An RNA of 177 nucleotides, treated with 2A3 and DMS and read out base by base.
Source: RMDB library OK2TRN, as collected in RNAgym.
2A3 adducts were read by reverse transcription with SuperScript II with manganese.

RNA sequence: GGGAACGACUCGAGUAGAGUCGAAAAUACGCUUAUUAAAUUUAGUGCUGCUCAGGCCAUCGAAAAGGUCAAUGAGUGCGUUAAGAGCCAAACUACGCGCAUUAAUUUCUGUGGCAAUGGUAAUCACCAUUAAGUGCUCAUUCGUGAGCACUUAAUGAAAAGAAACAACAACAACAAC
Reactivity to 2A3 in 0.01 (KOAc 150mM, MgCl2 10mM, bicine 150mM(pH8.5), 24C), signal-to-noise 4, nucleotides 027 to 126: u090a010c040g000c040u080u100a060u090u180a300a120a170u150u130u070a040g020u030g040c050u030g020c000u010c020a030g020g010c010c010a070u100c050g090a120a050a040a060g020g000u030c030a000a130u080g010a020g010u020g000c000g000u000u050a070a030g040a020g050c040c030a040a090a040c050u090a030c040g000c000g000c030a020u010u130a080a100u000u220u010c040u050g030u020g030g000c020a020a060u090g060g000u060a080a080u110c040a000c060
Reactivity to DMS in 0.01 (KOAc 150mM, MgCl2 10mM, bicine 150mM(pH8.5), 24C), signal-to-noise 5, nucleotides 027 to 126: u000a050c080g000c030u000u020a090u000u010a080a090a140u010u000u010a050g010u000g000c050u010g040c020u000c060a050g000g010c010c010a060u000c170g010a050a060a110a120g000g020u000c040a100a090u000g010a030g030u000g010c020g020u010u010a050a050g000a100g010c060c140a040a070a100c140u000a060c200g000c030g010c020a030u010u000a070a130u000u010u000c030u000g010u010g020g000c080a070a060u000g020g000u000a060a090u010c100a070c120